RNA sequence: GGGAACGACUCGAGUAGAGUCGAAAACAUCGUGCUAGGCACAGUGCUAGGCUCUCAGGAAACAUGCAUGGAGUGUAGGUUCCUUGGGGGAUGUGAAUUAUCAACACCCUUGAGCAUGGCUGGAACGAAUCGCCCCUCCCGAGGACAGACAGGUAGAGGUAAAAGGACGAUUCGUCGUCCUUUUACCAAAAGAAACAACAACAACAAC
Reactivity to DMS in 0.01 (KOAc 150mM, MgCl2 10mM, bicine 150mM(pH8.5), 24C), signal-to-noise 1, nucleotides 027 to 156: c030a080u020c060g020u000g020c000u000a110g070g040c040a000c060a020g050u000g040c040u000a110g030g000c080u000c040u000c020a100g000g040a100a060a090c050a060u000g000c020a100u000g000g010a120g060u000g010u000a020g040g010u010u010c020c020u000u000g000g060g040g000g060a090u000g020u000g020a190a210u000u030a110u010c040a100a060c010a010c000c000c030u010u030g000a040g030c020a070u000g040g000c030u000g010g010a130a150c060g010a090a080u010c080g020c050c040c020c030u020c040c000c020g000a090g000g000a080c020a110g010a100c030a050g010g010u000a160g010a130
Reactivity to 2A3 in 0.01 (KOAc 150mM, MgCl2 10mM, bicine 150mM(pH8.5), 24C), signal-to-noise 2, nucleotides 027 to 156: c030a050u150c060g020u030g030c050u120a110g130g000c020a020c020a060g010u020g060c060u080a040g000g040c010u010c000u000c040a050g080g000a090a050a000c060a020u100g030c010a020u100g060g060a130g050u040g050u130a050g030g100u110u040c020c000u030u060g060g010g010g010g020a130u020g050u040g090a120a160u200u120a130u230c050a020a050c010a040c000c000c000u000u050g050a030g000c040a040u050g100g000c030u070g010g030a050a030c020g030a040a090u040c040g000c000c000c000c000u020c000c010c020g010a010g010g010a020c020a020g050a010c010a020g020g180u120a030g050a040